[RMDB]
RNA sequence: GGGAACGACUCGAGUAGAGUCGAAAACGGCAUUUCCCCAGCAGCCAUGACCUACCAGGCUGCGGUGCCGCUCGCCGCACAGGUCAUCCCUCAUCGGGCGCGUCCUGCGUCCUUCCACGCCAACCCAAGACCAUUGCUUCCUUCGGGAAGCAAUGAACAUACUGCCAAAGUUCGCUUUGGCAGUAUGAAAAGAAACAACAACAACAAC
Reactivity to DMS in 0.01 (KOAc 150mM, MgCl2 10mM, bicine 150mM(pH8.5), 24C), signal-to-noise 3, nucleotides 027 to 156: c030g010g020c020a120u000u000u000c030c010c000c060a280g020c030a060g030c000c000a140u000g010a130c090c050u010a150c050c050a130g000g010c030u020g030c010g020g030u010g020c010c040g030c060u000c050g020c010c000g020c040a130c060a080g020g000u000c030a100u000c040c020c010u020c070a110u000c080g000g010g000c030g040c000g000u020c060c040u000g010c020g000u000c010c000u000u000c000c020a090c070g050c010c020a080a130c010c010c020a060a160g000a140c090c000a020u000u000g000c000u000u000c000c000u020u010c300g020g000g010a000a010g040c000a000a000u000g000a060a160
Reactivity to 2A3 in 0.01 (KOAc 150mM, MgCl2 10mM, bicine 150mM(pH8.5), 24C), signal-to-noise 6, nucleotides 027 to 156: c020g020g000c020a040u040u070u150c010c020c000c010a010g020c010a010g010c010c010a180u100g060a160c020c040u110a110c110c060a030g040g000c020u010g010c000g020g000u020g000c010c000g030c030u020c040g030c020c000g030c010a040c010a060g030g030u030c020a100u060c010c000c010u080c040a100u110c050g010g000g000c010g010c010g040u200c040c080u140g000c000g020u020c000c000u050u000c030c000a080c050g030c020c020a050a070c010c000c010a040a010g060a060c050c020a010u000u000g000c000u000u010c000c000u010u070c150g060g000g000a000a000g010c000a000a000u000g000a000a000

Structure probing data (DMS and 2A3) for a 207-nucleotide construct. Conditions: 150 mM KOAc, 10 mM MgCl2 and 150 mM bicine (pH 8.5), 24 C. It was measured as part of the RMDB library M2RFPK. DMS adducts were read by reverse transcription with MarathonRT.